[RMDB]
RNA sequence: GGGAACGACUCGAGUAGAGUCGAAAACACAUGCCAUCAUAUCGGUUAAGAACUCUUAACUCUGAUGGCUUUCGAGUUAUGUGGUGCAUUGAAGCUCUCCCUUCAAUUCAACGUACCGUUCCGUCAACAACAGGGGCUAAUUCGUUAGCCCCUGUUGAAAAGAAACAACAACAACAAC
Reactivity to 2A3 in 0.01 (KOAc 150mM, MgCl2 10mM, bicine 150mM(pH8.5), 24C), signal-to-noise 2, nucleotides 027 to 126: c070a020c030a050u160g000c050c000a000u000c010a030u090a080u300c060g040g010u020u020a020a010g050a290a240c090u000c000u300u010a010a010c000u000c030u070g000a000u020g000g000c000u010u020u010c010g000a000g000u070u050a080u160g090u120g050g000u000g020c040a030u020u020g020a010a010g010c020u000c040u090c090c030c040u060u070c030a050a050u080u010c000a030a060c030g030u050a040c000c000g000u000u000c040c000g170u120c050a040a030
Reactivity to DMS in 0.01 (KOAc 150mM, MgCl2 10mM, bicine 150mM(pH8.5), 24C), signal-to-noise 4, nucleotides 027 to 126: c150a100c150a060u010g010c000c010a010u000c000a060u000a130u030c280g010g020u000u010a000a000g010a260a150c300u020c010u000u000a010a000c000u000c090u000g010a020u000g000g000c000u000u000u000c030g010a050g010u000u020a050u010g010u000g000g020u000g020c050a030u000u000g000a010a030g020c080u010c080u000c050c070c010u000u000c090a030a060u000u000c030a040a040c030g020u000a030c020c000g010u000u000c000c010g000u020c100a060a150
An RNA of 177 nucleotides, treated with 2A3 and DMS and read out base by base. For 2A3 the reverse transcriptase was SuperScript II with manganese.